An RNA of 177 nucleotides, treated with 2A3 and DMS and read out base by base.
It was measured as part of the RMDB library TTRDES.
For DMS, 3,062 sequencing reads were counted.
For DMS the reverse transcriptase was MarathonRT.
Reactivities are given for positions 27 through 126.
RNA sequence: GGGAACGACUCGAGUAGAGUCGAAAAGAUAUGGAGUAAUCUAGGGAGCUGACACUCGGAAACGAGUGGUAGCAUCGAUCUAGGAUUACUCCUAAGUCAAACUUAAUGGUGUUCGCACCAUUAAGAAGAGUUUAUUCUACUUCGGUAGAAUAAACUCAAAAGAAACAACAACAACAAC
Reactivity to 2A3 in 0.01 (KOAc 150mM, MgCl2 10mM, bicine 150mM(pH8.5), 24C), signal-to-noise 1, nucleotides 027 to 126: g010a020u040a020u120g000g000a000g010u010a000a000u000c020u040a050g100g180g050a140g010c000u020g040a020c000a000c000u000c000g030g010a050a030a030c010g000a000g010u010g010g010u020a010g010c020a040u280c120g110a150u060c010u040a030g170g000a000u010u020a000c000u000c010c000u000a020a000g020u000c010a050a080a150c000u000u010a010a010u010g000g010u010g060u060u100c180g030c090a000c000c000a010u000u000a000a000g010a080a050
Reactivity to DMS in 0.01 (KOAc 150mM, MgCl2 10mM, bicine 150mM(pH8.5), 24C), signal-to-noise 3, nucleotides 027 to 126: g010a010u000a300u010g020g000a030g000u000a000a000u000c000u000a100g010g010g000a130g010c000u000g000a030c000a010c000u000c000g020g000a070a070a190c000g000a010g030u000g000g010u000a000g010c010a280u030c240g030a060u010c020u000a110g010g000a010u000u000a010c000u000c000c000u000a000a060g000u000c020a150a120a250c000u000u000a000a000u000g010g020u000g000u000u000c300g000c010a010c000c000a010u000u000a010a010g010a110a130